[RMDB]
RNA sequence: GGGAACGACUCGAGUAGAGUCGAAAAUUGCCGAUCGGGCUGUGUUGUGGCGGGGGCGAAACAGGAUCGACAAGGGUGUAAAGAUCGCUCUUUUACUCGGCAUGAUACCACCGUUAUCGGGUCAACAAAAAGAAUAUGUGGUUCGCCACAUAUUCAAUCGAACAUACUAGUUCGCUAGUAUGUUCGAAAAAGAAACAACAACAACAAC
Reactivity to 2A3 in 0.01 (KOAc 150mM, MgCl2 10mM, bicine 150mM(pH8.5), 24C), signal-to-noise 3, nucleotides 027 to 156: u080u040g070c000c000g020a060u080c070g020g050g030c070u050g010u030g020u100u040g040u050g030g090c040g010g010g000g000g000c040g010a010a020a010c050a040g080g030a120u060c030g020a040c060a040a060g020g070g010u040g060u110a090a150a010g030a050u060c020g000c030u000c000u040u110u020u030a080c070u020c020g010g000c020a000u040g000a000u050a030c000c030a020c010c000g060u050u070a030u050c030g000g040g010u060c020a020a030c020a010a100a010a010a000g010a010a010u010a000u000g000u000g000g040u040u050c230g010c060c020a010c000a000u000a000u000u000c000a000a020
Reactivity to DMS in 0.01 (KOAc 150mM, MgCl2 10mM, bicine 150mM(pH8.5), 24C), signal-to-noise 2, nucleotides 027 to 156: u000u010g010c000c000g020a030u000c050g010g010g020c060u000g020u020g000u000u000g030u000g000g040c030g020g020g030g050g000c040g030a060a040a120c060a090g030g000a060u000c030g010a070c080a050a190g000g020g000u000g010u000a110a120a150g090a100u000c080g020c020u000c010u000u010u010u000a070c020u000c040g000g000c020a110u000g000a070u000a080c030c100a090c000c020g050u000u020a060u000c080g030g000g000u010c060a060a240c160a030a060a100a100a190g000a010a010u000a000u000g030u010g000g030u000u000c300g030c010c030a000c010a010u000a020u000u000c000a060a120

Chemical mapping of a 207-nucleotide RNA with 2A3 and DMS. The RNA was probed in 150 mM KOAc, 10 mM MgCl2 and 150 mM bicine (pH 8.5) at 24 C. For DMS the reverse transcriptase was MarathonRT. It was measured as part of the RMDB library M2RFPK. The 2A3 profile rests on 2,599 reads. The DMS profile rests on 3,362 reads.